Description:
The data come from the RNA Mapping Database (RMDB), library TTRINS. An RNA of 177 nucleotides, treated with DMS and 2A3 and read out base by base. Reactivities are given for positions 27 through 126. For DMS, 19,960 sequencing reads were counted.

RNA sequence: GGGAACGACUCGAGUAGAGUCGAAAAGAUAUGGAGCCAAGCUCCUUCGCUGAUGACCUAUAUCCGAAGUAUAUCGGAAACGAUAUAUGUAGAUAUAGCAAGGCGAAGGAGCGAAGGCUCCUAAGUCCAUGAUAUCAUAGUUCGCUAUGAUAUCAUGAAAAGAAACAACAACAACAAC
Reactivity to DMS in 0.01 (KOAc 150mM, MgCl2 10mM, bicine 150mM(pH8.5), 24C), signal-to-noise 9, nucleotides 027 to 126: g010a080u010a300u000g010g010a010g010c000c010a040a300g000c000u000c000c000u000u000c000g020c000u000g000a090u010g010a080c300c000u000a010u000a000u000c050c050g000a160a300g000u000a010u000a000u010c000g000g000a110a100a180c010g010a010u000a000u000a000u000g000u010a120g000a020u000a000u000a000g000c030a080a130g010g010c000g000a010a000g000g000a010g010c000g000a060a090g000g000c000u000c000c000u000a010a080g000u000c050
Reactivity to 2A3 in 0.01 (KOAc 150mM, MgCl2 10mM, bicine 150mM(pH8.5), 24C), signal-to-noise 8, nucleotides 027 to 126: g080a020u140a070u300g010g000a010g010c000c010a030a010g000c000u000c000c010u010u000c000g000c010u070g040a300u160g050a120c010c020u000a000u000a010u030c120c050g050a120a020g030u010a010u000a000u010c010g040g040a120a060a020c020g000a000u000a000u000a020u300g110u180a020g000a000u000a000u000a000g010c020a120a300g000g000c000g000a010a000g000g000a000g000c000g000a000a000g000g000c000u000c000c000u000a000a000g000u000c000